The record gives the reactivity of an RNA of 177 nucleotides to 2A3 and DMS. 2A3 adducts were read by reverse transcription with SuperScript II with manganese. For DMS, 3,303 sequencing reads were counted. The reactions ran in a buffer of 150 mM KOAc, 10 mM MgCl2 and 150 mM bicine (pH 8.5), at 24 C. It was measured as part of the RMDB library OK2TRN.
RNA sequence: GGGAACGACUCGAGUAGAGUCGAAAAUAGCGCCACGUCUCUCUAGGCCAGGCGCGGCCAGCGCAGCGCGAUCAGGCCCGCAGCGACAGAGUACGUACGGCCACUAGAGUACGCGAUCAGCUGCGCGAUGAAUCGGAAUGUUCGCAUUCCGAUUCAUAAAAGAAACAACAACAACAAC
Reactivity to 2A3 in 0.01 (KOAc 150mM, MgCl2 10mM, bicine 150mM(pH8.5), 24C), signal-to-noise 3, nucleotides 027 to 126: u050a020g000c000g010c030c020a130c090g030u050c010u000c010u000c100u170a060g000g000c040c030a080g020g000c000g000c000g000g000c010c010a010g020c020g000c000a000g000c020g100c180g080a020u010c030a020g000g000c010c020c040g040c090a080g050c010g020a050c050a090g280a070g090u220a050c010g010u010a000c030g000g030c010c000a020c050u110a050g070a040g160u130a080c160g010c080g070a020u020c020a010g000c010u000g020c000g010c000g000
Reactivity to DMS in 0.01 (KOAc 150mM, MgCl2 10mM, bicine 150mM(pH8.5), 24C), signal-to-noise 4, nucleotides 027 to 126: u010a110g010c040g010c000c000a170c260g010u000c020u000c100u000c240u010a110g020g000c020c090a240g010g000c020g000c020g000g000c000c020a150g010c010g000c020a020g000c020g010c140g000a040u000c020a130g000g010c060c020c050g010c160a050g010c030g000a090c070a170g010a140g000u000a080c050g010u000a070c150g020g010c030c040a130c080u010a060g020a100g010u000a060c080g020c100g000a060u000c030a220g000c000u000g010c000g010c010g000